[RMDB]
RNA sequence: GGGAACGACUCGAGUAGAGUCGAAAAGAUAUGGAGGCGAGAAACGAGUGUCAGAUUGAGGAGAUGUAUCGGAAACGAUACAUACCUCCAAUGAUGUCUGAGCACUCGUUUCUCGCCUCCUAAGUCAGUAGUAGUAAGUCUUCGGACUUACUACUACAAAAGAAACAACAACAACAAC
Reactivity to DMS in 0.01 (KOAc 150mM, MgCl2 10mM, bicine 150mM(pH8.5), 24C), signal-to-noise 3, nucleotides 027 to 126: g000a050u000a300u010g010g020a020g020g010c000g010a010g000a010a000a000c000g020a020g030u000g020u010c010a010g000a010u000u010g000a090g020g000a070g010a040u010g000u000a010u000c000g000g010a120a070a250c000g030a000u000a000c000a000u000a060c300c010u000c000c040a180a160u010g010a110u010g000u000c000u000g000a110g020c010a010c020u000c000g000u000u000u000c010u000c000g020c010c000u000c000c000u000a010a070g000u000c050a100